This 177-nucleotide RNA was probed chemically with 2A3.
Source: RMDB library OK1LIB, as collected in RNAgym.
RNA sequence: GGGAACGACUCGAGUAGAGUCGAAAAGAUGAGAAUACGUGACUUGGUCAGAGGCGGAAAGACACAAGCACGAACGAUACAGUAGAGUAUCGAACCGCCAACAGAUGCACGUUGUGAUCGUGCUAGACGAGGGCACCAGGUUCGCCUGGUGCCCUCGAAAAGAAACAACAACAACAAC
Reactivity to 2A3 in 0.01 (KOAc 150mM, MgCl2 10mM, bicine 150mM(pH8.5), 24C), signal-to-noise 1, nucleotides 027 to 126: g150a090u300g090a000g050a140a030u110a120c000g000u000g090a080c020u000u000g050g000u000c060a050g000a000g150g000c000g000g000a300a000a000g000a000c180a000c030a030a000g000c000a000c030g050a060a090c000g000a000u000a000c070a050g300u300a090g140a000g170u000a080u000c000g000a000a000c000c000g030c020c040a070a020c050a060g260a110u200g020c000a000c090g010u060u200g170u200g000a140u230c000g000u000g000c000u000a090g000a000

The reactions ran in a buffer of 150 mM KOAc, 10 mM MgCl2 and 150 mM bicine (pH 8.5), at 24 C.